[RMDB]
RNA sequence: GGGAACGACUCGAGUAGAGUCGAAAAUUAAAGUACGUAGAAGCGGCGUGAUGCAUGUAGAAAGCUUUGCGAGCAUAUCGAGCUACAUGUGAGCGAAAGCGGUUACGUACAACGAUAUGCAAAAAAAGUGUUACACGUUGUUCGCAACGUGUAACACAAAAGAAACAACAACAACAAC
Reactivity to DMS in 0.01 (KOAc 150mM, MgCl2 10mM, bicine 150mM(pH8.5), 24C), signal-to-noise 1, nucleotides 027 to 126: u020u010a060a060a060g000u000a000c020g000u000a010g000a150a120g030c010g000g020c060g010u000g010a200u010g000c000a000u000g000u010a040g000a100a090a090g070c170u010u000u030g000c130g020a150g010c050a010u000a020u000c090g000a180g000c000u000a010c000a040u010g000u000g000a230g030c000g000a040a050a090g020c000g050g000u010u000a000c020g020u000a000c010a050a060c060g000a030u000a020u010g020c050a000a020a030a050a090a050a090
Reactivity to 2A3 in 0.01 (KOAc 150mM, MgCl2 10mM, bicine 150mM(pH8.5), 24C), signal-to-noise 2, nucleotides 027 to 126: u070u020a100a010a000g000u010a010c000g020u040a000g010a160a040g060c050g170g000c020g050u030g010a040u250g010c000a000u030g000u000a020g050a140a060a010g020c020u110u100u160g130c100g030a030g010c010a030u030a020u190c040g010a020g060c000u000a010c000a000u030g020u060g040a010g000c000g040a130a110a020g000c000g020g000u070u020a000c000g040u000a000c010a010a000c000g000a000u070a060u250g010c130a070a040a030a000a000a020a020

Chemical mapping of a 177-nucleotide RNA with DMS and 2A3. For DMS the reverse transcriptase was MarathonRT. The DMS profile rests on 995 reads. For 2A3, 1,650 sequencing reads were counted.